Background: This 207-nucleotide RNA was probed chemically with 2A3 and DMS. DMS adducts were read by reverse transcription with MarathonRT.
RNA sequence: GGGAACGACUCGAGUAGAGUCGAAAAGACGUAAUCCGCGCAAAUCCACAAACGCCAACGAUGAGCGUUUCGCUGUAGCCGCUUAAGGCAACAGCCGGGGCCGACUGAGCCCUGUUACCAAAGACGGGAAACUCGAUGCCAUUCGUGGCAUCGAGAAUCAGAAGCAUGUAUUCGUACAUGCUUCUGAAAAAGAAACAACAACAACAAC
Reactivity to 2A3 in 0.01 (KOAc 150mM, MgCl2 10mM, bicine 150mM(pH8.5), 24C), signal-to-noise 4, nucleotides 027 to 156: g040a020c020g020u030a010a110u070c030c010g000c010g020c090a070a060a170u110c070c020a070c060a080a060a030c030g020c010c030a180a040c200g160a230u180g020a050g030c000g000u000u050u040c060g000c000u000g010u030a050g000c000c020g050c170u280u260a080a070g010g000c020a010a010c000a020g000c000c010g030g000g000g000c010c010g130a110c110u150g010a020g050c020c000c000u020g020u060u090a060c020c040a090a030a010g070a040c050g010g020g040a040a060a020c000u000c000g000a010u010g000c000c000a000u030u080c250g050u070g000g000c000a000u010c000g000a000g000a000a010
Reactivity to DMS in 0.01 (KOAc 150mM, MgCl2 10mM, bicine 150mM(pH8.5), 24C), signal-to-noise 2, nucleotides 027 to 156: g010a120c090g030u000a080a100u000c040c050g000c040g040c030a040a060a110u000c030c020a070c060a090a280a010c000g010c030c010a140a130c070g000a110u000g000a100g000c030g030u000u000u000c070g000c030u000g030u000a080g010c030c000g010c240u000u000a060a230g030g030c000a050a010c000a020g040c040c030g010g020g000g060c000c010g000a170c220u020g000a130g020c000c000c010u000g000u000u020a060c080c070a040a130a150g000a100c010g000g000g000a080a110a160c000u000c020g010a010u000g000c000c000a140u010u000c240g050u010g000g000c030a000u000c000g000a000g030a040a060

The reactions ran in a buffer of 150 mM KOAc, 10 mM MgCl2 and 150 mM bicine (pH 8.5), at 24 C. It was measured as part of the RMDB library M2RFPK.